RNA sequence: GGGAACGACUCGAGUAGAGUCGAAAACUUUCGCUGACUCCACCGUGCUCCGGGUCCGGCCUACAUGGUCCCGGGACGCGCGCAAUAACAAGGUCCCGGACUACGGGCCGGCGGUGCCGCGUGUGCCGCUUCCCGGCUGUCACGUCGAGCCUGGGGCGCUAUCCAAAGAUUUCGAUCUUUGGAUAGCAAAAGAAACAACAACAACAAC
Reactivity to 2A3 in 0.01 (KOAc 150mM, MgCl2 10mM, bicine 150mM(pH8.5), 24C), signal-to-noise 2, nucleotides 027 to 156: c020u110u160u140c060g030c100u060g080a080c000u000c010c020a060c020c030g050u030g010c000u010c020c000g010g000g000u000c030c030g010g000c000c000u080a090c070a090u220g010g000u010c160c090c010g000g000g010a050c050g040c010g050c020g070c210a090a210u250a270a100c110a230a000g050g010u000c040c000c030g000g010a000c010u040a040c110g010g000g050c000c000g040g000c000g000g000u010g010c010c040g130c060g030u300g030u010g050c000c000g000c000u240u160c000c000c010g000g000c110u040g090u160c000a010c030g030u030c030g040a010g030c000c020u050g000g040g020g100c030